[RMDB]
RNA sequence: GGGAACGACUCGAGUAGAGUCGAAAAAGUAAUGUGAUCUGUUAACAUAAAAAAAGUUUGACUUCACAAAAGCAGCUGGAAACGGACAACCAUAAUAUGCAUAAAUCUAACUCCUACCAUCGGCUACGAACUUGGUGUACUUCGGUACACCAAGUUCAAAAGAAACAACAACAACAAC
Reactivity to 2A3 in 0.01 (KOAc 150mM, MgCl2 10mM, bicine 150mM(pH8.5), 24C), signal-to-noise 1, nucleotides 027 to 126: a000g160u110a040a050u030g000u000g030a110u000c020u090g000u000u000a080a000c100a000u300a240a060a000a000a060a060a080g050u050u050u040g000a090c000u000u000c020a000c000a000a080a040a100g030c000a000g020c000u090g050g070a090a000a000c030g030g050a040c020a000a000c040c000a000u080a240a050u100a060u110g110c070a050u160a080a060a030u000c000u010a090a000c000u000c000c000u020a080c020c020a020u000c000g090g000c010u000a000c050